[RMDB]
RNA sequence: GGGAACGACUCGAGUAGAGUCGAAAAACAAGUUUUGCAAGGUAUGCACAAAAAACCAACCAAGGUAUAGAGCUCGUCGUCAGAGCACUUUGUUGGUCAUAUCCCGAAAGGGGUAUGGUCUCGCAAGCACAUGUUAUAUAUUCGUAUAUAACAUGUGAAAAGAAACAACAACAACAAC
Reactivity to DMS in 0.01 (KOAc 150mM, MgCl2 10mM, bicine 150mM(pH8.5), 24C), signal-to-noise 9, nucleotides 027 to 126: a100c090a100a090g010u010u010u010u010g010c030a060a080g000g010u010a060u010g010c060a090c240a000a030a050a050a070a050c010c010a020a030c070c060a030a030g010g010u010a160u020a120g010a130g010c000u000c010g010u010c200g010u020c240a120g000a020g020c010a070c020u000u000u000g010u000u000g000g000u000c000a010u000a000u000c000c000c000g000a060a070a140g010g000g010g010u000a000u000g010g010u010c030u000c060g010c140a070a080g010
Reactivity to 2A3 in 0.01 (KOAc 150mM, MgCl2 10mM, bicine 150mM(pH8.5), 24C), signal-to-noise 9, nucleotides 027 to 126: a000c070a060a040g030u050u070u140u100g030c030a050a030g090g060u160a120u150g050c060a020c100a050a080a020a020a010a010c010c000a010a000c010c010a010a010g060g020u110a120u120a170g150a030g020c010u010c020g150u040c050g170u150c150a040g000a000g020c000a010c010u010u010u030g010u010u010g000g000u000c000a000u000a000u010c000c000c000g030a050a030a010g000g000g000g000u000a000u000g000g010u010c010u020c060g050c030a050a040g040